The record gives the reactivity of an RNA of 207 nucleotides to 2A3. The reactions ran in a buffer of 150 mM KOAc, 10 mM MgCl2 and 150 mM bicine (pH 8.5), at 24 C. The data come from the RNA Mapping Database (RMDB), library ARCHII. Values are in units of 0.01, from 0 to 300, in steps of 10. For 2A3 the reverse transcriptase was SuperScript II with manganese.
[RMDB]
RNA sequence: GGGAACGACUCGAGUAGAGUCGAAAAAAAGAAAACAACAACUUCGCUCUAGCUGCAUAAGCUAAGCGGUCUCUCCUCUCCAUCGCCCAUGUGGAGUGGCUGAGACUCAACUUUAGUGGGAUACGCCUUUCUCCCCCCGCCUGAGGGAGAAGGAAGAGAGUUUUACAACGUUCGCGUUGUAAAACUCAAAAGAAACAACAACAACAAC
Reactivity to 2A3 in 0.01 (KOAc 150mM, MgCl2 10mM, bicine 150mM(pH8.5), 24C), signal-to-noise 2, nucleotides 027 to 156: a000a000a010g210a100a100a040a020c170a050a020c050a060a060c080u130u110c050g060c020u100c090u030a020g000c020u100g000c100a120u070a300a010g000c020u000a000a000g000c000g000g000u000c000u000c000u000c010c000u000c000u000c010c000a000u000c030g000c000c000c000a000u000g000u000g000g020a010g000u040g040g000c110u000g010a020g000a010c010u000c020a120a240c080u250u270u300a000g000u010g000g040g000a040u040a070c060g040c000c000u020u300u090c010u030c040c020c030c000c030c030g060c040c010u020g030a080g000g000g010a000g000a000a000g000g000a050a020g020a000